[RMDB]
RNA sequence: GGGAACGACUCGAGUAGAGUCGAAAACAAACAAAGCUUACAUUGGUGAUCAUAUUUAUGUUGAAGGGAUAUGGCUCGAAGUACAAGCUGAUGGUUUAAAUGUAUUGAGUCAGAAUACAGUGGCAUCACGUACUGGGGCAUUCGUGCCCCAGUACGUAAAAGAAACAACAACAACAAC
Reactivity to 2A3 in 0.01 (KOAc 150mM, MgCl2 10mM, bicine 150mM(pH8.5), 24C), signal-to-noise 1, nucleotides 027 to 126: c000a000a130a010c000a000a020a000g010c080u020u130a000c000a090u000u000g020g000u020g130a160u040c000a000u160a110u040u210u060a120u220g180u160u110g010a030a030g150g000g000a060u000a000u050g000g000c070u000c120g080a050a140g050u000a090c090a270a020g000c030u000g030a000u010g050g000u000u300u000a000a170a070u160g020u010a020u000u000g050a020g160u090c020a040g120a000a020u000a010c000a000g120u080g040g000c000a020u070c000
Reactivity to DMS in 0.01 (KOAc 150mM, MgCl2 10mM, bicine 150mM(pH8.5), 24C), signal-to-noise 2, nucleotides 027 to 126: c080a090a050a060c240a050a060a000g010c020u010u030a050c170a100u010u010g000g070u000g010a080u010c020a020u000a000u020u000u020a040u000g000u000u000g000a190a050g000g030g000a000u000a000u000g000g010c000u030c000g050a010a120g070u000a100c190a100a070g020c040u000g000a120u020g010g000u000u000u000a020a070a080u000g020u000a020u000u000g010a150g000u060c230a040g000a040a000u010a060c050a000g050u030g000g020c000a040u000c050